[RMDB]
RNA sequence: GGGAACGACUCGAGUAGAGUCGAAAACAGUACGGGCGGGAGAUCGGCGUUGGGCUAGGGUUUUGUGUGGUUCCGUGGUGUCGCGUGGAAGGCGCGUGCGAGCCGAGAGUGAGUGGGAGCGCGAAUGGAACGUAUACUACUUCGGUAGUAUACGUUCAAAAGAAACAACAACAACAAC
Reactivity to 2A3 in 0.01 (KOAc 150mM, MgCl2 10mM, bicine 150mM(pH8.5), 24C), signal-to-noise 2, nucleotides 027 to 126: c050a010g110u140a030c070g010g140g120c130g000g060g010a090g010a060u070c040g040g000c050g060u100u060g050g000g040c070u040a070g030g020g000u000u020u150u090g130u040g010u070g050g000u050u000c000c010g020u020g030g070u090g040u050c010g000c030g010u040g030g080a150a060g120g010c020g000c020g010u040g010c020g030a020g000c000c000g010a000g010a000g010u080g020a020g020u060g030g000g010a020g020c070g000c040g070a040a050u140g080
Reactivity to DMS in 0.01 (KOAc 150mM, MgCl2 10mM, bicine 150mM(pH8.5), 24C), signal-to-noise 2, nucleotides 027 to 126: c090a210g010u010a080c080g010g010g060c130g040g020g000a080g000a130u000c050g010g010c060g010u000u000g010g030g020c120u000a060g000g030g000u000u010u000u010g020u010g030u000g010g010u010u010c030c000g010u000g000g000u000g010u000c030g020c030g000u000g010g030a110a070g010g000c010g000c040g020u010g020c040g010a160g000c010c060g010a070g010a060g010u000g010a130g020u000g010g000g000a180g000c060g000c070g000a060a130u020g000
An RNA of 177 nucleotides, treated with 2A3 and DMS and read out base by base.
The RNA was probed in 150 mM KOAc, 10 mM MgCl2 and 150 mM bicine (pH 8.5) at 24 C.
Values are in units of 0.01, from 0 to 300, in steps of 10.
For 2A3, 2,562 sequencing reads were counted.